[RMDB]
RNA sequence: GGGAACGACUCGAGUAGAGUCGAAAAGGAUCAAGUAUGCGCAUCACUGCGAUGUUCUCGUCAGACUGGGCUGAGGCCGGAUCAUAGUGGUGCUGGUAAGGCGCCGGAACAGUCGCGAGCUGCACCGUGGUUCUACCAGAUUCGUCUGGUAGAACCAAAAAGAAACAACAACAACAAC
Reactivity to DMS in 0.01 (KOAc 150mM, MgCl2 10mM, bicine 150mM(pH8.5), 24C), signal-to-noise 3, nucleotides 027 to 126: g000g020a070u020c030a050a060g000u020a060u030g000c040g030c020a030u000c080a090c120u020g000c060g000a050u020g000u010u020c010u000c000g030u020c110a130g000a050c020u010g010g000g010c020u000g000a130g010g010c050c020g010g000a020u020c040a070u000a060g010u030g000g030u040g000c080u000g000g000u040a110a080g000g000c010g020c020c010g010g010a010a020c040a050g030u000c020g000c020g000a100g000c100u030g010c030a030c060c050g000
Reactivity to 2A3 in 0.01 (KOAc 150mM, MgCl2 10mM, bicine 150mM(pH8.5), 24C), signal-to-noise 4, nucleotides 027 to 126: g060g010a100u110c080a020a030g090u120a110u220g020c050g000c040a010u080c020a020c120u110g000c020g010a020u060g070u060u020c030u010c000g080u050c040a020g030a130c050u070g020g000g030c030u060g030a060g100g060c000c030g020g040a040u060c040a050u100a110g150u140g110g030u030g070c020u010g000g040u040a100a020g070g030c140g060c110c050g040g020a040a030c040a000g040u050c030g000c020g040a000g000c030u080g000c020a020c070c040g020
The record gives the reactivity of an RNA of 177 nucleotides to DMS and 2A3. It was measured as part of the RMDB library OK1LIB. The 2A3 profile rests on 3,255 reads.